[RMDB]
RNA sequence: GGGAACGACUCGAGUAGAGUCGAAAACUAUUCUGGGCUGAGAAAAUUUCUCUUAUCCGCCUAAAAUCUGAUCUGUUAGGUCAUGGGUCCUUCAUAAUCUGUUUGAGCAUGAAUAUUGAUCAAAUGACAUAAGAGGCAGUUUCGACUGCCUCUUAUGAAAAGAAACAACAACAACAAC
Reactivity to DMS in 0.01 (KOAc 150mM, MgCl2 10mM, bicine 150mM(pH8.5), 24C), signal-to-noise 2, nucleotides 027 to 126: c090u020a050u010u030c110u000g010g000g010c030u010g000a070g000a020a120a100a140u000u010u030c030u000c020u000u020a180u020c110c110g030c010c000u000a070a060a060a060u010c090u010g020a030u010c020u000g010u030u040a040g020g010u000c020a040u000g000g000g010u000c020c050u000u000c020a030u010a080a050u000c120u000g020u000u020u020g000a040g000c050a040u000g000a050a020u030a080u000u000g000a040u000c010a030a040a020u030g000a160
Reactivity to 2A3 in 0.01 (KOAc 150mM, MgCl2 10mM, bicine 150mM(pH8.5), 24C), signal-to-noise 5, nucleotides 027 to 126: c060u080a160u170u070c110u080g010g000g000c020u040g050a010g050a090a110a090a100u080u130u010c020u000c000u030u120a030u040c030c020g000c000c000u030a070a050a000a040u070c050u060g010a010u000c010u030g100u100u120a090g030g020u020c010a030u040g030g020g130u030c000c010u000u060c020a060u040a230a090u080c030u030g060u050u050u040g020a000g030c010a020u020g020a070a040u120a120u140u100g010a020u020c040a010a040a140u110g030a050